[RMDB]
Record summary
An RNA of 177 nucleotides, treated with DMS and 2A3 and read out base by base. DMS adducts were read by reverse transcription with MarathonRT. Conditions: 150 mM KOAc, 10 mM MgCl2 and 150 mM bicine (pH 8.5), 24 C.

RNA sequence: GGGAACGACUCGAGUAGAGUCGAAAAGAAAGUGUGCACUUGUAUCCGCGUAGUGGCAACGUGACUUCGGUCACGCGCAGGACUUUGCUGCCACUGCUUAGUCCUGCGGAUACUUGUGCUCACGAAAGGGUAGGCGUACCUUCGGGUGUGCCUACCCAAAAGAAACAACAACAACAAC
Reactivity to DMS in 0.01 (KOAc 150mM, MgCl2 10mM, bicine 150mM(pH8.5), 24C), signal-to-noise 5, nucleotides 027 to 126: g020a080a070a140g000u010g010u000g010c000a000c010u000u000g000u000a000u000c010c020g010c020g000u000a060g030u000g010g030c020a110a160c010g010u000g010a010c010u000u060c170g020g000u000c010a000c010g000c110g000c020a020g000g000a060c090u010u020u010g000c010u010g020c060c070a060c100u010g000c010u010u020a050g010u000c020c000u000g000c000g010g000a000u000a010c000u000u020g010u000g000c010u000c010a010c000g010a050a060a120
Reactivity to 2A3 in 0.01 (KOAc 150mM, MgCl2 10mM, bicine 150mM(pH8.5), 24C), signal-to-noise 9, nucleotides 027 to 126: g140a020a090a010g000u000g000u010g000c000a000c000u000u010g000u000a000u000c010c000g010c040g030u080a040g050u040g090g010c040a060a050c030g000u000g000a000c000u020u080c280g110g000u000c000a000c000g010c010g010c020a010g010g030a040c020u110u110u100g030c040u070g060c030c040a060c060u030g010c010u030u070a020g020u040c000c030u020g000c000g000g000a000u000a000c000u000u000g000u000g000c000u000c000a000c000g030a080a020a000